Source: RMDB library OK3TST, as collected in RNAgym.
Chemical mapping of a 207-nucleotide RNA with 2A3 and DMS.
Values cover nucleotides 27 to 156.
For 2A3 the reverse transcriptase was SuperScript II with manganese.
The 2A3 profile rests on 1,631 reads.
The RNA was probed in 150 mM KOAc, 10 mM MgCl2 and 150 mM bicine (pH 8.5) at 24 C.

[RMDB]
RNA sequence: GGGAACGACUCGAGUAGAGUCGAAAAGUCACACUCAUAGGUCGGGGGACUACACGGAUAGUCCAGACAUCAAAGCGCAUGUCAUCUCCUUCCUGCUGCCUGUUUAUGAGAAUUCAGUAUGUCACGGGCAUAGUCUAUUCUGCCGAUAGCGUAGUUAGGAAUGCGUAUCAUUCGUGAUACGCAUUCCAAAAGAAACAACAACAACAAC
Reactivity to 2A3 in 0.01 (KOAc 150mM, MgCl2 10mM, bicine 150mM(pH8.5), 24C), signal-to-noise 3, nucleotides 027 to 156: g070u060c010a010c020a000c040u040c040a040u060a080g110g010u020c040g010g000g000g030g000a010c000u020a030c230a050c050g170g050a200u010a020g010u000c000c000a000g010a000c000a090u020c050a040a190a110g040c030g050c090a010u030g020u030c020a120u000c070u070c020c010u040u050c000c040u020g040c010u030g010c000c000u070g050u050u160u050a070u110g080a020g060a090a030u150u060c000a020g040u050a070u100g110u060c060a000c130g030g030g000c030a020u040a020g030u000c020u010a100u170u010c030u060g040c030c040g070a040u050a070g030c080g070u050a040g080u120u110a060
Reactivity to DMS in 0.01 (KOAc 150mM, MgCl2 10mM, bicine 150mM(pH8.5), 24C), signal-to-noise 1, nucleotides 027 to 156: g000u000c020a090c020a040c050u000c040a080u020a040g010g020u010c050g030g020g010g010g000a050c000u010a060c020a190c170g040g010a180u000a020g000u000c020c000a220g000a090c000a040u000c120a140a080a050g000c080g000c040a140u000g030u000c020a110u000c020u000c020c000u000u000c010c010u010g000c030u000g000c040c010u010g000u000u000u010a090u020g010a080g000a030a080u000u000c050a060g020u000a040u000g010u000c070a110c150g040g000g030c020a040u000a030g000u000c010u000a080u010u000c010u000g010c060c050g000a130u000a060g050c010g000u000a070g020u010u000a190